[RMDB]
RNA sequence: GGGAACGACUCGAGUAGAGUCGAAAAGGGGUCCUCCGAGUAGGGACGCCGUGUUCGCUUGGAUUUAUGGGUCUGAAGCCUCCACGGACCCAUUGUCAGCGAACGCGUCCCGCAGAUACGGAGGACGGAGGCACCCAAAUGUACAUUCGUGUACAAAGCUUAAAAUUAAGUUCGCUUAAUUUUAAGCAAAAGAAACAACAACAACAAC
Reactivity to 2A3 in 0.01 (KOAc 150mM, MgCl2 10mM, bicine 150mM(pH8.5), 24C), signal-to-noise 7, nucleotides 027 to 156: g070g010g030g010u000c000c000u000c000c000g010a010g020u080a130g000g000g010a010c020g030c100c120g200u090g040u030u010c020g020c030u140u300g220g000a080u170u160u070a010u060g000g000g000u010c000u010g030a090a010g010c000c000u000c010c000a020c010g000g000a000c000c020c000a000u000u020g010u040c080a030g000c000g000a000a000c000g000c000g000u000c010c010c010g010c050a000g000a010u030a030c000g000g000a000g000g000a000c010g000g000a000g000g000c000a050c010c000c000a060a100a050u100g000u000a000c000a010u010u120c210g090u040g000u050a010c010a040a060a030
Reactivity to DMS in 0.01 (KOAc 150mM, MgCl2 10mM, bicine 150mM(pH8.5), 24C), signal-to-noise 2, nucleotides 027 to 156: g010g020g040g020u010c000c000u000c000c010g010a210g010u000a060g040g010g000a040c000g030c220c190g020u000g020u000u000c010g040c000u000u000g030g010a130u000u010u000a000u000g010g000g010u000c010u010g020a050a120g010c030c010u000c000c010a300c050g000g010a050c000c010c000a030u010u000g010u000c030a110g020c000g010a020a020c040g030c000g020u000c000c000c000g000c140a110g020a100u000a080c010g000g010a070g040g010a010c010g010g030a030g100g010c010a100c010c010c010a050a080a180u000g000u000a010c000a140u000u010c250g030u000g020u010a030c010a050a040a240
The data come from the RNA Mapping Database (RMDB), library RNAMAK. The record gives the reactivity of an RNA of 207 nucleotides to 2A3 and DMS. The DMS profile rests on 5,657 reads.